[RMDB]
Structure probing data (2A3 and DMS) for a 177-nucleotide construct. For 2A3, 1,047 sequencing reads were counted. For DMS the reverse transcriptase was MarathonRT. The RNA was probed in 150 mM KOAc, 10 mM MgCl2 and 150 mM bicine (pH 8.5) at 24 C. 2A3 adducts were read by reverse transcription with SuperScript II with manganese.
RNA sequence: GGGAACGACUCGAGUAGAGUCGAAAAAUUGGGAAUGUUCCUCCACCACCUGCAAUUUGUAAUACAAGCAAUACGAUUGCAAUUGCUUUACCUGGGUUACCAAGUAAUGAUACGCACGUAUAUACGACACACAAUCCACAUUCGUGUGGAUUGUGUGAAAAGAAACAACAACAACAAC
Reactivity to 2A3 in 0.01 (KOAc 150mM, MgCl2 10mM, bicine 150mM(pH8.5), 24C), signal-to-noise 1, nucleotides 027 to 126: a020u140u140g070g010g120a180a110u120g030u080u010c000c010u030c010c000a040c040c020a010c010c030u020g010c000a040a070u040u060u100g010u050a040a090u110a180c060a100a040g000c040a020a140u010a080c060g000a070u000u140g000c000a000a040u050u050g020c000u050u060u010a000c000c010u000g040g070g000u090u030a120c060c000a000a030g040u010a050a030u060g060a060u040a050c090g000c030a030c030g080u000a000u020a030u000a090c070g060a010
Reactivity to DMS in 0.01 (KOAc 150mM, MgCl2 10mM, bicine 150mM(pH8.5), 24C), signal-to-noise 1, nucleotides 027 to 126: a080u030u020g000g000g000a060a030u000g010u000u000c020c010u010c030c060a110c060c000a040c080c070u020g010c040a070a040u000u000u000g000u030a010a020u040a100c120a050a050g020c140a130a040u000a050c040g000a080u010u000g040c000a030a070u010u000g000c050u010u000u000a030c020c040u000g000g010g000u000u010a060c070c040a000a040g030u000a010a030u000g000a060u010a080c090g000c030a030c060g000u000a020u000a120u000a130c130g010a300